[RMDB]
RNA sequence: GGGAACGACUCGAGUAGAGUCGAAAAGAUAUGGAAAGCUUGGACCUUUGGGCACUUGGACCUCGGAAACGAGCUAGUGCAGAAGCUAGCUUUCCUAAGUCAAAACAGUCAGGUUCGCCUGACUGAAGAACUUAACAUUGUUCGCAAUGUUAAGUUCAAAAGAAACAACAACAACAAC
Reactivity to DMS in 0.01 (KOAc 150mM, MgCl2 10mM, bicine 150mM(pH8.5), 24C), signal-to-noise 7, nucleotides 027 to 126: g000a030u000a200u010g000g000a020a020a010g000c000u000u010g020g010a100c200c090u000u010u000g020g020g010c000a010c010u000u010g030g010a120c300c010u000c010g010g000a040a050a100c020g010a020g000c020u000a010g010u000g020c000a300g000a050a070g010c030u000a020g000c000u000u000u000c000c000u000a020a100g010u000c040a090a070a100a200c010a000g000u000c000a000g000g000u000u010c270g010c000c000u000g010a010c010u000g010a040a080
Reactivity to 2A3 in 0.01 (KOAc 150mM, MgCl2 10mM, bicine 150mM(pH8.5), 24C), signal-to-noise 8, nucleotides 027 to 126: g000a010u040a010u060g000g010a010a010a010g010c040u110u190g090g130a280c040c000u120u150u210g220g140g000c010a010c010u030u090g090g170a250c040c020u000c010g000g010a030a020a010c000g000a000g010c000u010a010g000u000g020c130a160g130a240a000g010c010u010a000g000c000u010u000u000c000c000u000a030a000g020u010c010a000a010a120a190c010a000g000u010c000a000g050g070u050u090c240g100c060c000u000g010a000c000u000g010a010a030